[RMDB]
RNA sequence: GGGAACGACUCGAGUAGAGUCGAAAAUAACAUCGUAGUGUAAGACGAAAAGUCAACGUCGCUUGCCAGCAGGACCACCAAAGGAAUACGCUUCGGUAACUACUCGAGAUCCCAAGCGAUAUCACAAAGUUACAUCGGCUUUCGAGCCGAUGUAACUAAAAGAAACAACAACAACAAC
Reactivity to DMS in 0.01 (KOAc 150mM, MgCl2 10mM, bicine 150mM(pH8.5), 24C), signal-to-noise 1, nucleotides 027 to 126: u000a110a110c110a050u000c100g010u030a040g020u000g000u000a150a060g000a110c030g020a070a030a060a090g000u000c140a030a180c090g020u000c020g010c020u000u010g010c020c020a080g000c000a030g010g000a060c070c070a050c010c100a020a100a040g000g060a030a060u000a060c150g000c060u000u000c060g000g010u000a020a090c010u000a000c000u010c020g020a020g000a070u010c030c000c020a010a050g030c090g030a080u000a060u020c160a090c110a060a030

Structure probing data (DMS) for a 177-nucleotide construct.
Values cover nucleotides 27 to 126.